[RMDB]
An RNA of 177 nucleotides, treated with DMS and 2A3 and read out base by base. Source: RMDB library TTRDES, as collected in RNAgym. Reactivities are given for positions 27 through 126. DMS adducts were read by reverse transcription with MarathonRT.

RNA sequence: GGGAACGACUCGAGUAGAGUCGAAAAGAUAUGGAGCGCAUGCAAUAGGCGCUCGGAAACGAGCGAACUACCUAGCAUGAACUACGCUCCUAAGUCAAACGCUAAACAGCUUCGGCUGUUUAGCGAAUCGAUAACUGGAGUUCGCUCCAGUUAUCGAAAAAGAAACAACAACAACAAC
Reactivity to DMS in 0.01 (KOAc 150mM, MgCl2 10mM, bicine 150mM(pH8.5), 24C), signal-to-noise 2, nucleotides 027 to 126: g020a010u000a050u000g000g000a000g020c000g010c000a000u000g020c010a220a130u000a000g000g000c020g000c010u010c000g010g000a020a040a070c020g000a000g020c000g020a050a010c010u030a300c020c000u000a020g040c010a020u000g000a080a070c250u010a300c060g020c000u000c000c000u000a000a080g010u000c010a110a080a280c010g000c000u000a000a020a000c010a030g030c020u000u000c300g020g030c000u010g000u000u000u020a000g010c010g000a000a010
Reactivity to 2A3 in 0.01 (KOAc 150mM, MgCl2 10mM, bicine 150mM(pH8.5), 24C), signal-to-noise 2, nucleotides 027 to 126: g020a010u050a000u060g000g010a010g000c040g000c010a000u000g000c060a300a300u020a030g000g020c000g040c020u000c000g000g000a020a000a000c000g010a020g030c020g000a040a030c060u120a090c300c010u000a000g030c000a000u030g000a030a050c070u180a090c160g000c000u010c000c010u000a000a000g000u010c020a110a070a140c030g020c000u000a000a000a000c000a000g010c000u110u120c300g300g000c010u000g000u000u000u000a000g010c000g000a000a000